[RMDB]
RNA sequence: GGGAACGACUCGAGUAGAGUCGAAAAGAUAUGGAGCGUUGGUGAGGCGUUGAUCUUACCUCGGAAACGAGGUAAGGGAGCCUACCACUGCGCUCCUAAGUCAAAGUCGUGCCUUCGGGCACGACAACAUCAUGGGACAGUUCGCUGUCCCAUGAUGAAAAGAAACAACAACAACAAC
Reactivity to DMS in 0.01 (KOAc 150mM, MgCl2 10mM, bicine 150mM(pH8.5), 24C), signal-to-noise 3, nucleotides 027 to 126: g010a030u010a060u010g010g010a000g040c000g040u010u020g010g030u010g020a060g050g030c000g010u000u040g000a010u010c000u010u000a010c000c010u000c000g000g000a020a030a050c010g010a040g000g000u000a000a000g010g000g000a010g010c000c010u000a030c050c000a040c300u000g000c030g010c000u000c010c000u000a000a110g010u000c010a120a130a200g030u000c000g010u000g000c000c000u010u030c270g030g010g030c000a010c010g010a010c010a040a130
Reactivity to 2A3 in 0.01 (KOAc 150mM, MgCl2 10mM, bicine 150mM(pH8.5), 24C), signal-to-noise 2, nucleotides 027 to 126: g010a010u020a030u080g000g000a010g010c030g030u150u160g060g000u140g220a130g040g000c030g120u230u020g000a000u000c000u000u000a000c010c000u010c000g000g000a010a010a000c010g000a000g020g000u000a000a010g010g000g000a010g010c020c010u020a020c020c000a000c020u060g020c000g000c020u030c000c020u000a000a010g000u010c030a190a090a010g010u000c000g010u000g000c000c000u050u100c300g050g000g000c000a000c010g040a000c000a000a000